An RNA of 207 nucleotides, treated with 2A3 and DMS and read out base by base. It was measured as part of the RMDB library OK3TST.
RNA sequence: GGGAACGACUCGAGUAGAGUCGAAAAAAACUUCAACCUCAGGGAAAAUAGCAUCCGCUUCAGACUUUCUACAAUUGUGCGCUCUCUGGGGCUACGAAGCGGAAGAGCAUGUUGUACAGACAGGCGAUGGCUAUCUUCUUUGUCUGCACAGGCUGCCUCAUGAAUGGAAAUUCGUUUCCAUUCAUGAAAAAGAAACAACAACAACAAC
Reactivity to 2A3 in 0.01 (KOAc 150mM, MgCl2 10mM, bicine 150mM(pH8.5), 24C), signal-to-noise 4, nucleotides 027 to 156: a000a000a000c030u100u040c030a050a050c010c010u020c000a000g010g020g030a060a110a100a100u140a170g050c010a040u050c030c040g040c040u040u040c070a110g040a220c060u100u200u080c070u170a100c080a160a150u120u140g060u080g080c060g020c070u010c000u000c010u020g000g000g010g020c000u070a040c070g010a010a010g010c000g000g020a040a040g020a020g070c010a030u130g000u040u040g020u090a060c030a020g010a020c010a010g010g010c000g080a060u080g100g060c090u170a050u050c030u150u010c000u080u130u040g000u000c020u010g000c040a020c000a040g080g000c020u010g010c000c000
Reactivity to DMS in 0.01 (KOAc 150mM, MgCl2 10mM, bicine 150mM(pH8.5), 24C), signal-to-noise 3, nucleotides 027 to 156: a080a030a070c030u000u000c030a060a040c020c000u010c020a040g010g000g010a050a050a070a070u000a070g020c040a150u010c030c000g020c010u000u000c000a180g010a120c070u000u000u000c020u000a090c060a030a110u010u000g040u000g010c030g000c070u000c000u000c010u000g020g000g020g020c020u010a060c120g010a070a010g030c030g020g000a050a070g000a110g070c030a060u010g020u010u000g010u000a030c020a060g020a040c010a030g030g020c300g000a070u000g020g030c090u000a090u000c040u000u000c020u000u000u010g020u000c020u000g030c020a030c060a060g010g000c030u010g010c020c040